[RMDB]
RNA sequence: GGGAACGACUCGAGUAGAGUCGAAAAUGCUGGAAUGCCGUUGCGCCCUCGGCGAAGUCGUCAGUACGCAGGAGGAGGGCCUGGCCAUCCAAUUCGCGCAGGAGAGUGGGUGCCAACUCGGUGAGCGUACCUCGGGAUUUUUCGAAAUCCCGAGGUAAAAAGAAACAACAACAACAAC
Reactivity to DMS in 0.01 (KOAc 150mM, MgCl2 10mM, bicine 150mM(pH8.5), 24C), signal-to-noise 1, nucleotides 027 to 126: u010g000c060u000g020g000a090a140u000g010c000c000g000u000u020g010c200g010c000c020c070u000c010g000g030c080g010a090a100g020u020c010g030u000c130a180g030u020a060c050g080c060a140g020g000a160g020g010a070g010g010g010c020c000u000g000g000c040c090a110u000c010c050a040a130u000u000c030g010c040g040c110a050g020g000a230g030a070g020u020g030g000g010u000g000c030c040a060a150c080u010c010g000g000u000g000a080g030c070g010